[RMDB]
RNA sequence: GGGAACGACUCGAGUAGAGUCGAAAAUCAGGGGAAGAGUUGCUAUUUGAUUUUCAGUGCAUGGGAAGCCACUGAAAAGUUUUAUGCAGAGAAGUAAAACCAUCUCACUCAUGUUUCUAGAAGCCUUAUGGGCCACUGUGCAGAGCAUAGAGUGUGAGACUCAUGCACUAUUCGUAGUGCAUGAGUCAAAAGAAACAACAACAACAAC
Reactivity to 2A3 in 0.01 (KOAc 150mM, MgCl2 10mM, bicine 150mM(pH8.5), 24C), signal-to-noise 7, nucleotides 027 to 156: u090c020a020g010g020g000g020a030a040g030a050g070u050u060g030c030u060a100u100u130u170g120a090u030u010u020u030c010a010g000u010g010c040a050u120g060g040g040a040a020g020c040c010a010c010u000g000a010a020a000a000g000u070u070u120u160a080u130g010c050a010g030a020g010a170a020g030u130a030a060a050a050c070c010a070u070c030u010c030a000c000u010c010a020u030g020u040u300u020c010u030a060g040a180a020g040c010c010u190u200a150u300g040g010g010c030c030a080c070u110g040u120g070c060a010g000a000g010c010a000u030a060g010a000g000u030g010u030g020a040
Reactivity to DMS in 0.01 (KOAc 150mM, MgCl2 10mM, bicine 150mM(pH8.5), 24C), signal-to-noise 2, nucleotides 027 to 156: u000c070a080g000g030g010g000a050a100g010a100g010u000u000g020c030u000a160u040u000u010g020a200u000u000u000u000c010a050g010u000g020c040a130u020g020g010g000a170a190g010c130c020a020c000u000g000a010a000a010a080g030u010u010u000u000a080u000g010c070a210g010a160g020a140a180g010u010a010a020a030a090c030c000a090u000c020u000c000a010c010u010c010a010u000g000u000u000u020c030u000a130g000a140a110g030c020c000u000u000a110u010g010g000g000c000c060a030c050u000g010u000g020c110a060g000a050g010c000a050u000a130g010a060g030u000g000u000g000a130